[RMDB]
RNA sequence: GGGAACGACUCGAGUAGAGUCGAAAACACUGCUUAAUCUCUUUUGUAUUUCCUUUCACUUUAUGCUCAGCAGAUUUGUGAUAGGUGAACAAAUGCAAAUCUCUAAGAACACAUAAACAUCAAAGUAGAAGUAACACAGAACCUUGAAAACUUAGCAUAUCACUGCUAAUUUCGAUUAGCAGUGAUAAAAAGAAACAACAACAACAAC
Reactivity to DMS in 0.01 (KOAc 150mM, MgCl2 10mM, bicine 150mM(pH8.5), 24C), signal-to-noise 2, nucleotides 027 to 156: c040a110c040u000g010c010u000u000a120a070u010c010u000c000u000u000u030u000g040u000a070u010u000u010c120c000u010u010u000c000a020c030u000u000u000a070u000g030c050u000c080a150g060c140a140g030a100u000u000u000g020u000g010a120u000a110g040g020u000g020a070a140c140a060a100a060u000g000c050a020a030a030u000c020u000c020u000a050a100g030a060a080c050a060c060a090u000a100a030a120c070a100u000c030a090a080a040g030u000a050g000a050a090g020u000a030a070c070a110c050a080g010a060a110c050c030u000u000g000a080a050a030a080c100u000u010a070g020c070a240
Reactivity to 2A3 in 0.01 (KOAc 150mM, MgCl2 10mM, bicine 150mM(pH8.5), 24C), signal-to-noise 7, nucleotides 027 to 156: c040a020c020u070g060c010u100u140a140a140u090c040u030c000u090u050u040u040g040u050a270u020u050u050c010c000u030u060u030c020a020c010u060u110u080a050u100g020c040u070c300a090g000c020a040g050a250u060u110u140g010u010g010a030u040a040g030g030u070g050a080a030c030a050a040a010u050g010c010a000a060a110u030c060u010c010u150a140a050g070a240a010c060a010c000a120u160a070a140a020c040a060u110c080a130a080a040g010u040a030g040a090a010g020u110a100a000c040a000c010a070g070a060a030c020c030u060u090g070a080a090a010a010c040u070u050a030g030c020a050